[RMDB]
RNA sequence: GGGAACGACUCGAGUAGAGUCGAAAACCAAGGGCCUUGGCUGGCUGUGGCCAUGGGAUCUCCAGCUGUAGACCAGAGUAACUGGAGAACUUGGACAGCCCAGGUCAGCACAGUGCCUGCAGCUGCCAUGGGCAACUAAUUUCGAUUAGUUGCCCAUAAAAGAAACAACAACAACAAC
Reactivity to DMS in 0.01 (KOAc 150mM, MgCl2 10mM, bicine 150mM(pH8.5), 24C), signal-to-noise 6, nucleotides 027 to 126: c010c010a170a110g010g010g020c010c010u000u000g010g020c000u000g000g000c010u000g000u010g010g020c030c020a240u030g000g010g010a070u000c000u000c000c010a020g000c010u010g010u010a150g000a160c280c050a030g000a190g010u030a120a210c000u000g000g000a030g010a020a040c020u000u000g020g000a100c260a130g000c100c040c050a070g000g010u010c010a020g020c030a020c060a030g000u030g000c020c000u000g010c160a070g000c040u010g000c210c140
Reactivity to 2A3 in 0.01 (KOAc 150mM, MgCl2 10mM, bicine 150mM(pH8.5), 24C), signal-to-noise 8, nucleotides 027 to 126: c010c010a060a100g030g010g010c000c020u060u060g020g000c000u010g010g010c020u050g110u180g140g000c020c040a060u070g040g030g080a140u010c000u010c000c000a000g000c010u040g060u190a070g100a230c050c030a020g010a020g060u090a110a100c000u010g000g000a010g000a010a030c000u020u020g050g010a070c090a070g030c010c010c010a010g010g070u040c010a000g020c050a050c010a020g050u100g160c000c000u010g000c000a050g030c010u080g030c040c020
Source: RMDB libraries RFM100 and RFMREP, as collected in RNAgym. Chemical mapping of a 177-nucleotide RNA with DMS and 2A3. For 2A3 the reverse transcriptase was SuperScript II with manganese. Conditions: 150 mM KOAc, 10 mM MgCl2 and 150 mM bicine (pH 8.5), 24 C.